[RMDB]
An RNA of 177 nucleotides, treated with 2A3 and DMS and read out base by base. For DMS the reverse transcriptase was MarathonRT. The reactions ran in a buffer of 150 mM KOAc, 10 mM MgCl2 and 150 mM bicine (pH 8.5), at 24 C. The data come from the RNA Mapping Database (RMDB), library OK1LIB.
RNA sequence: GGGAACGACUCGAGUAGAGUCGAAAAGCGAGUACACGCAGUAUACUGCCACUUGUGUGAGAAUACUUUUAGUACAAGCGAGUACACGCAGUAUAGUGCCACUUGUGUGAGAAUACUUUUAGUACAACAAUCAACGCUGUUUCGACAGCGUUGAUUGAAAAGAAACAACAACAACAAC
Reactivity to 2A3 in 0.01 (KOAc 150mM, MgCl2 10mM, bicine 150mM(pH8.5), 24C), signal-to-noise 4, nucleotides 027 to 126: g020c020g000a000g030u150a040c090a010c110g000c000a010g050u000a000u000a000c000u000g010c000c000a000c000u020u010g010u000g000u110g190a170g120a140a090u070a050c000u070u210u140u230a090g000u030a000c010a090a010g010c000g040a010g020u070a030c100a000c060g010c000a010g040u000a000u010a000g180u010g000c010c000a020c000u050u020g010u020g020u090g080a080g070a060a070u100a100c000u060u110u040u110a100g080u110a030c020a110a010
Reactivity to DMS in 0.01 (KOAc 150mM, MgCl2 10mM, bicine 150mM(pH8.5), 24C), signal-to-noise 2, nucleotides 027 to 126: g020c030g000a100g000u020a010c040a100c300g110c000a000g000u000a000u000a020c000u000g000c020c180a060c010u000u000g000u000g000u050g000a130g000a180a060u000a070c000u020u020u080u000a060g000u000a010c000a120a300g000c000g000a010g000u040a020c120a190c260g000c020a080g000u000a050u000a000g000u010g010c020c230a050c030u000u010g000u000g030u050g000a080g000a130a080u010a020c010u060u000u000u000a080g000u010a040c190a040a300